Structure probing data (DMS and 2A3) for a 177-nucleotide construct. Source: RMDB library RFMREP, as collected in RNAgym. Values cover nucleotides 27 to 126. For 2A3, 2,288 sequencing reads were counted. The DMS profile rests on 4,788 reads.

[RMDB]
RNA sequence: GGGAACGACUCGAGUAGAGUCGAAAAAGUGUAUUCUGAUGAUAAGCAAGUCAACAUCAAUCUAUGAGUGUCGGAGAAGGGUUUUGAGAAUGUAGCAAUUUUUAUUAAUUGUGUUAUAGCUUGAGACGUAUAACAUUCACUUCGGUGAAUGUUAUACAAAAGAAACAACAACAACAAC
Reactivity to DMS in 0.01 (KOAc 150mM, MgCl2 10mM, bicine 150mM(pH8.5), 24C), signal-to-noise 4, nucleotides 027 to 126: a070g020u000g010u000a070u000u000c050u000g010a080u010g010a090u000a060a110g010c080a060a110g010u000c050a050a070c070a040u010c030a060a080u010c080u000a060u010g010a110g020u000g010u000c030g000g000a080g000a080a070g000g010g010u010u000u010u000g000a040g000a030a050u000g000u010a180g000c010a010a000u000u000u000u020u040a060u040u000a040a020u000u000g010u000g010u010u010a050u000a050g010c020u000u000g020a070g010a050c150
Reactivity to 2A3 in 0.01 (KOAc 150mM, MgCl2 10mM, bicine 150mM(pH8.5), 24C), signal-to-noise 3, nucleotides 027 to 126: a000g090u090g040u050a120u090u100c030u040g080a070u020g010a030u060a150a030g020c050a070a030g050u070c020a030a030c010a060u080c020a010a000u010c030u120a090u120g030a010g080u040g070u080c040g000g030a040g030a030a070g040g000g020u030u050u050u030g010a020g000a080a050u080g010u020a030g000c000a000a020u000u050u030u050u100a160u180u100a060a020u020u030g010u000g020u080u070a080u050a060g010c020u020u030g060a020g000a040c070